[RMDB]
RNA sequence: GGGAACGACUCGAGUAGAGUCGAAAAAUUUGGGGAUGUUCGGCAACUCAAGCAGACAUGCUCAGAAGACAAUCCUGGACUAGAAAGGUGCUGGGAACAACUAUUCCUCAUCCUUUGGAAAUGGAGGGGGUAAGCCCAUAUUCGUAUGGGCUUACCCAAAAGAAACAACAACAACAAC
Reactivity to 2A3 in 0.01 (KOAc 150mM, MgCl2 10mM, bicine 150mM(pH8.5), 24C), signal-to-noise 2, nucleotides 027 to 126: a050u090u030u030g000g010g000g050a000u010g060u180u030c050g110g000c000a120a130c060u120c220a080a050g000c000a000g010a010c030a000u160g000c000u000c050a010g010a010a010g110a060c010a030a120u020c010c000u000g010g040a010c010u030a050g190a190a090a000g120g090u070g020c100u120g000g000g060a050a000c050a040a030c060u150a280u100u060c000c010u020c070a110u250c000c000u060u070u100g060g040a000a060a110u080g030g030a140g090g090
Reactivity to DMS in 0.01 (KOAc 150mM, MgCl2 10mM, bicine 150mM(pH8.5), 24C), signal-to-noise 1, nucleotides 027 to 126: a050u000u030u000g100g000g000g000a000u000g000u000u090c040g030g070c000a080a140c300u030c300a000a210g000c000a050g000a000c040a000u000g000c000u000c000a000g030a050a050g010a080c300a050a120u000c000c000u000g050g000a300c210u000a080g000a080a050a000g010g000u000g000c110u000g000g120g050a090a000c120a180a160c170u050a240u000u000c000c000u000c070a120u000c000c000u000u000u030g030g000a210a140a090u000g000g030a090g000g010